[RMDB]
RNA sequence: GGGAACGACUCGAGUAGAGUCGAAAAGUGUAAUUAGUAAGAUAACUAUAGCUGGAGGACCAGCUCCCUCCGCGCAACUAGAAACGCCAGCGGUCAAAUGGCCGUUGCAUAAGACACCUUCACGCAGGAGUGCUUAUUAUUUCGAUAAUAAGCACUCAAAAGAAACAACAACAACAAC
Reactivity to DMS in 0.01 (KOAc 150mM, MgCl2 10mM, bicine 150mM(pH8.5), 24C), signal-to-noise 4, nucleotides 027 to 126: g030u010g010u010a080a040u010u020a050g010u010a110a120g000a080u010a080a100c020u020a020u040a130g010c000u010g010g010a140g010g000a160c050c110a070g000c090u000c030c000c000u000c020c010g010c080g000c020a060a070c110u020a050g010a140a150a080c180g000c110c030a000g020c020g000g000u000c020a090a090a110u040g000g010c020c010g000u000u000g010c060a050u020a070a090g000a040c070a030c010c010u000u010c030a060c080g030c130a070g030
Reactivity to 2A3 in 0.01 (KOAc 150mM, MgCl2 10mM, bicine 150mM(pH8.5), 24C), signal-to-noise 9, nucleotides 027 to 126: g060u070g050u100a130a170u170u110a080g090u080a200a090g090a300u160a230a020c030u040a040u100a170g020c030u050g010g020a040g020g100a170c030c030a020g020c010u020c000c000c000u000c010c010g020c010g000c010a010a040c050u040a050g130a110a100a010c070g030c060c010a010g010c000g010g020u030c040a140a200a280u270g010g000c000c000g010u000u010g000c000a030u070a110a010g060a010c020a030c030c010u090u120c040a050c130g030c040a030g050